[RMDB]
RNA sequence: GGGAACGACUCGAGUAGAGUCGAAAACUGGUGGGCAACGGGUGCGACCACGCCCAUUUGGGAGUACAUGCCGCCCAGGUUGGGCUGGCGGGUGCAGGUGGCGAACGAGACGACGCCGAGCGGCCAGGAUCAGUCGUAACUUCGGUUACGACUGAUCAAAAGAAACAACAACAACAAC
Reactivity to DMS in 0.01 (KOAc 150mM, MgCl2 10mM, bicine 150mM(pH8.5), 24C), signal-to-noise 2, nucleotides 027 to 126: c010u000g000g050u000g020g010g010c050a100a130c100g010g000g040u000g000c070g000a160c040c050a050c150g000c030c010c000a240u000u000u010g010g010g020a140g030u020a030c110a120u010g000c020c050g010c000c000c000a060g010g020u030u000g010g000g010c020u000g020g000c020g020g000g000u000g020c050a150g020g020u010g000g010c050g010a070a090c100g000a130g000a060c060g000a100c130g000c030c030g000a110g010c080g000g010c030c040a090g000
Reactivity to 2A3 in 0.01 (KOAc 150mM, MgCl2 10mM, bicine 150mM(pH8.5), 24C), signal-to-noise 2, nucleotides 027 to 126: c010u020g000g050u070g030g100g000c050a170a060c080g040g110g010u100g050c010g040a080c010c020a030c050g040c020c000c000a030u100u070u090g040g010g020a100g000u040a030c020a070u080g010c020c030g070c020c010c000a060g160g140u140u070g060g030g030c130u140g000g000c000g000g000g000u030g020c000a020g080g090u080g020g000c070g020a040a010c040g040a050g050a090c070g030a020c030g000c010c010g010a010g030c030g050g010c020c000a030g100
An RNA of 177 nucleotides, treated with DMS and 2A3 and read out base by base. It was measured as part of the RMDB library OK2TST. For DMS the reverse transcriptase was MarathonRT.